[RMDB]
RNA sequence: GGGAACGACUCGAGUAGAGUCGAAAACAGUUUGAUAAGAUCGUGCGCUCAACCCACGGCGUCAACUGCACGGGCUCCUGUAGCUGGAAAAUUUAUGUCAAAAACGGUCUGGUGACGUGGGAAACCCCCAGUAAUAUGGCUUCGGCCAUAUUACUGGAAAAGAAACAACAACAACAAC
Reactivity to DMS in 0.01 (KOAc 150mM, MgCl2 10mM, bicine 150mM(pH8.5), 24C), signal-to-noise 3, nucleotides 027 to 126: c050a060g040u020u010u020g000a060u030a100a050g000a150u000c020g010u000g000c030g000c080u030c030a160a170c050c040c050a060c090g000g010c040g020u000c030a010a030c010u000g000c080a080c140g000g020g000c020u000c030c030u010g010u000a080g000c020u010g000g000a080a030a080a100u010u030u040a040u030g000u020c080a030a020a040a090a080c100g000g000u020c060u020g000g010u010g000a020c060g000u000g010g000g010a010a060a110c040c010c010
Reactivity to 2A3 in 0.01 (KOAc 150mM, MgCl2 10mM, bicine 150mM(pH8.5), 24C), signal-to-noise 7, nucleotides 027 to 126: c040a050g060u130u160u120g170a150u160a120a100g030a090u090c000g020u040g040c050g010c020u060c040a080a090c010c000c000a000c010g000g000c010g010u010c020a020a000c020u050g010c070a030c090g070g050g010c010u020c000c040u170g110u220a040g010c020u050g080g110a050a100a050a070u190u250u110a200u230g130u070c070a070a060a020a030a030c050g010g020u050c110u020g000g010u030g020a010c010g010u010g000g000g060a020a040a070c010c000c000